[RMDB]
RNA sequence: GGGAACGACUCGAGUAGAGUCGAAAAGGGGUCUUUAGGAGGGUUAAGCCGUAGUAUCAAGCCUCUGAAGCCUCCACGGAGGCUGACCACGCUACGGAACUACUUAACCUCCCCACCCUAAAGACGGAGGCACCCAAAAGGUAAGUUCGCUUACCAAGAAGUCUUUAUCGUUCGCGAUAAAGACUUCAAAAGAAACAACAACAACAAC
Reactivity to 2A3 in 0.01 (KOAc 150mM, MgCl2 10mM, bicine 150mM(pH8.5), 24C), signal-to-noise 2, nucleotides 027 to 156: g050g050g010g000u050c040u070u100u060a020g010g010a020g030g060g000u050u070a010a000g000c020c020g010u010a030g000u010a040u210c150a090a060g000c010c000u000c000u000g030a070a020g020c000c000u000c020c000a000c030g010g030a020g010g000c000u000g000a030c060c030a150c140g020c000u010a000c000g000g060a040a030c060u300a000c010u090u100a020a010c000c030u060c000c000c010c010a170c030c000c000u070a040a030a000g010a010c050g000g000a000g000g030c000a020c000c020c000a030a220a030a000g000g000u000a000a000g000u030u150c260g020c100u000u000a000c010c000a000a040
This 207-nucleotide RNA was probed chemically with 2A3. The RNA was probed in 150 mM KOAc, 10 mM MgCl2 and 150 mM bicine (pH 8.5) at 24 C. High 2A3 reactivity points to a flexible backbone, as in loops and unpaired stretches. The data come from the RNA Mapping Database (RMDB), library RNAMAK.